[RMDB]
Structure probing data (DMS and 2A3) for a 207-nucleotide construct. For 2A3 the reverse transcriptase was SuperScript II with manganese. The reactions ran in a buffer of 150 mM KOAc, 10 mM MgCl2 and 150 mM bicine (pH 8.5), at 24 C.
RNA sequence: GGGAACGACUCGAGUAGAGUCGAAAACCUGUAUCUAUUCGUAGAUACAGGAAAACCUUUGUGGUACGACAUGAGAAUAGUGUGCCCAUUGGGCACCUAUGUUUAAUCUCAACAGCGUACCACUCUGGUAAAAUCAAAGCUUGUUCGCAAGCUUUGACAAUUCGACUCCGUUCGCGGAGUCGAAUUGAAAAGAAACAACAACAACAAC
Reactivity to DMS in 0.01 (KOAc 150mM, MgCl2 10mM, bicine 150mM(pH8.5), 24C), signal-to-noise 1, nucleotides 027 to 156: c000c010u000g000u000a030u000c030u000a050u000u010c240g000u000a000g020a000u030a030c000a000g030g000a020a020a090a110c030c010u000u010u000g010u000g000g030u000a020c010g000a100c050a300u000g020a040g000a140a030u000a010g000u020g030u000g020c000c000c020a300u010u000g030g060g000c000a010c000c000u010a000u010g010u010u000u010a180a280u030c020u000c020a020a120c050a240g000c020g010u020a000c010c020a000c020u000c020u000g000g010u000a020a070a100a200u030c000a050a030a010g050c000u000u000g010u000u000c250g050c050a010a010g040c000u000u010u020g040a030
Reactivity to 2A3 in 0.01 (KOAc 150mM, MgCl2 10mM, bicine 150mM(pH8.5), 24C), signal-to-noise 2, nucleotides 027 to 156: c000c010u000g000u010a010u000c000u000a020u050u060c100g060u020a000g000a000u000a000c010a000g000g030a030a070a010a000c020c000u030u020u010g020u000g000g000u000a000c000g080a050c120a080u070g000a000g030a100a020u020a000g190u230g000u000g290c010c020c060a300u240u300g000g000g030c000a010c000c000u010a020u000g010u020u200u130a190a150u040c000u010c000a040a120c080a080g040c020g000u000a010c000c020a000c000u000c000u000g000g000u060a100a060a010a070u000c000a000a000a000g000c000u000u010g000u060u130c280g020c120a010a020g000c000u010u000u000g000a000